[RMDB]
RNA sequence: GGGAACGACUCGAGUAGAGUCGAAAAGCGGAAAAGAGUGCGUGGUAGCACAAACCAGACCAAUCCGCGGCACAUGGUCGCACAUGCACAGCUUCGCCUGUGCAAAGCGAACAAGGCGAACAAAGAAAAAUGAGUGGACGUUCGCGUCCACUCAUUUAAAAGAAACAACAACAACAAC
Reactivity to 2A3 in 0.01 (KOAc 150mM, MgCl2 10mM, bicine 150mM(pH8.5), 24C), signal-to-noise 2, nucleotides 027 to 126: g000c000g070g000a020a060a040a020g070a100g100u110g170c100g060u080g090g100u100a120g060c070a030c050a160a010a000c050c030a010g100a040c000c000a030a030u020c000c000g000c000g030g000c010a040c020a210u040g010g000u000c040g000c000a040c050a060u040g010c000a000c000a000g000c070u250u240c050g010c020c000u000g000u020g000c000a050a000a000g000c000g000a050a000c010a060a010g060g040c040g060a080a000c020a030a220a000g300a080a190
Reactivity to DMS in 0.01 (KOAc 150mM, MgCl2 10mM, bicine 150mM(pH8.5), 24C), signal-to-noise 2, nucleotides 027 to 126: g000c000g000g000a080a030a060a240g020a200g000u010g000c060g010u010g050g000u030a180g070c140a000c030a010a120a070c050c060a070g010a240c030c000a110a110u000c000c000g010c000g000g000c040a000c050a030u030g000g000u000c000g030c000a140c180a230u020g000c000a000c030a010g000c030u010u000c140g000c130c020u000g010u010g000c000a000a060a130g000c050g010a010a040c010a020a100g000g000c000g060a050a130c170a110a090a070g020a000a060

This 177-nucleotide RNA was probed chemically with 2A3 and DMS.
For DMS, 1,747 sequencing reads were counted.
Values are in units of 0.01, from 0 to 300, in steps of 10.
The reactions ran in a buffer of 150 mM KOAc, 10 mM MgCl2 and 150 mM bicine (pH 8.5), at 24 C.
DMS adducts were read by reverse transcription with MarathonRT.